[RMDB]
RNA sequence: GGGAACGACUCGAGUAGAGUCGAAAACACUGUGACUCGUUCACCAAACGCUGUAUCUGUGACCCUUUUUGGAUGGAGAAUUUCAUCAAGGUGCAGCUGAGGGAUGGAGACAGCAACUGUGAGUGGACAUCCCAAAUACGUUCGCGUAUUUGGGAUGAAAAGAAACAACAACAACAAC
Reactivity to DMS in 0.01 (KOAc 150mM, MgCl2 10mM, bicine 150mM(pH8.5), 24C), signal-to-noise 6, nucleotides 027 to 126: c110a090c080u000g010u000g010a120c060u010c040g000u000u000c050a150c020c040a050a170a240c210g000c010u000g010u010a020u000c000u000g010u000g000a150c180c030c030u000u000u010u010u010g010g010a040u000g010g010a050g020a120a080u010u000u000c020a040u000c030a090a030g010g020u000g010c030a030g010c020u000g010a240g010g000g010a070u000g010g000a050g000a090c020a050g000c060a080a070c150u000g000u000g010a100g010u000g000g000a210
Reactivity to 2A3 in 0.01 (KOAc 150mM, MgCl2 10mM, bicine 150mM(pH8.5), 24C), signal-to-noise 5, nucleotides 027 to 126: c030a000c020u060g040u060g110a060c020u020c060g070u040u030c070a080c150c010a080a180a010c060g000c000u000g020u030a020u020c000u030g140u100g220a190c020c000c000u070u060u020u110u140g150g010a040u040g060g040a090g090a300a300u080u100u050c020a030u010c040a050a040g070g010u030g000c010a000g040c020u020g020a030g000g020g010a010u060g060g010a010g010a020c010a010g000c030a040a070c070u120g040u090g160a060g070u050g010g020a020
An RNA of 177 nucleotides, treated with DMS and 2A3 and read out base by base.
Conditions: 150 mM KOAc, 10 mM MgCl2 and 150 mM bicine (pH 8.5), 24 C.
High DMS reactivity at an A or C suggests that its Watson-Crick edge is free.
For DMS, 6,809 sequencing reads were counted.
Source: RMDB library OK2TST, as collected in RNAgym.